About this RNA:
An RNA of 207 nucleotides, treated with 2A3 and DMS and read out base by base. Reactivities are rounded to 0.1 and cut off at 0 and 3. Source: RMDB library OK3TST, as collected in RNAgym. Reactivities are given for positions 27 through 156. 2A3 adducts were read by reverse transcription with SuperScript II with manganese.
RNA sequence: GGGAACGACUCGAGUAGAGUCGAAAAUUAGCCAAUUGUACUUCUUUCUCAGAGAAUGCCUAUUCAUGUGUUCUGCACAUUUUAAAAGCAGGAUCUUUGUGGUAUAUGGCUUAUAUGUCAAUAAAACUGUUAUUAAUGAAAAACAUAGGUGAGGCAAAGCUUUUAUUAAUUUCGAUUAAUAAAAGCUAAAAGAAACAACAACAACAAC
Reactivity to 2A3 in 0.01 (KOAc 150mM, MgCl2 10mM, bicine 150mM(pH8.5), 24C), signal-to-noise 3, nucleotides 027 to 156: u100u080a000g020c020c000a040a120u060u060g010u060a040c040u010u100c020u080u170u100c090u030c070a010g020a020g020a070a060u050g030c000c000u090a100u090u140c030a020u040g020u020g020u120u090c010u130g080c020a030c010a050u090u140u140u270a060a130a020a000g000c000a010g000g020a030u020c020u040u140u110g020u030g020g020u040a040u020a040u080g000g020c000u060u030a090u010a010u110g030u010c010a020a030u030a160a050a090a070c030u030g030u150u060a070u140u050a080a070u070g040a050a100a030a040a020c020a010u080a020g000g040u040g050a020g010g000c010a020a090
Reactivity to DMS in 0.01 (KOAc 150mM, MgCl2 10mM, bicine 150mM(pH8.5), 24C), signal-to-noise 2, nucleotides 027 to 156: u000u000a120g040c000c040a050a150u000u020g020u000a080c040u010u010c030u000u000u010c040u000c100a300g030a130g020a210a180u000g020c020c020u000a190u000u000c130a080u000g030u010g000u000u000c110u020g030c020a060c040a100u000u000u000u000a020a080a100a180g010c020a040g010g010a190u030c020u000u000u010g020u010g000g050u000a020u000a060u000g020g030c060u000u010a040u000a070u000g000u000c020a070a100u000a040a090a100a110c030u000g000u000u000a130u000u020a070a070u010g000a050a080a080a040a020c010a040u000a020g010g020u010g010a070g030g020c040a090a060